This 207-nucleotide RNA was probed chemically with 2A3.
RNA sequence: GGGAACGACUCGAGUAGAGUCGAAAAGAGAUGCAGAAGGGCCAUAUCAUUUGAAUAUGCUAUGUCGUACGUCAUAAGACAUCAAAGUCAAGUCGACUCGUAGACACUCUGUGUCCCACAAUUCAUUUGUGGCCUCCUCGUGGUAUCCUCCGGGUGCGACACUAGCGAAGUUCGCUUCGCUAGUGUCAAAAGAAACAACAACAACAAC
Reactivity to 2A3 in 0.01 (KOAc 150mM, MgCl2 10mM, bicine 150mM(pH8.5), 24C), signal-to-noise 2, nucleotides 027 to 156: g030a000g000a000u060g060c010a000g010a150a020g050g050g010c070c020a040u060a040u050c050a070u040u140u170g070a130a040u120a010u060g100c080u090a080u250g000u010c040g150u120a050c080g010u030c030a130u040a200a100g000a000c000a020u060c000a050a120a070g040u040c030a010a090g040u030c060g040a000c000u000c090g020u040a020g040a000c000a000c010u170c110u160g010u000g040u000c000c010c020a000c020a010a040u170u170c040a030u040u000u020g000u000g000g060c020c000u010c000c010u060c010g140u010g070g000u020a070u050c000c020u010c060c030g010g000g040u010g040c040
Conditions: 150 mM KOAc, 10 mM MgCl2 and 150 mM bicine (pH 8.5), 24 C.
2A3 adducts were read by reverse transcription with SuperScript II with manganese.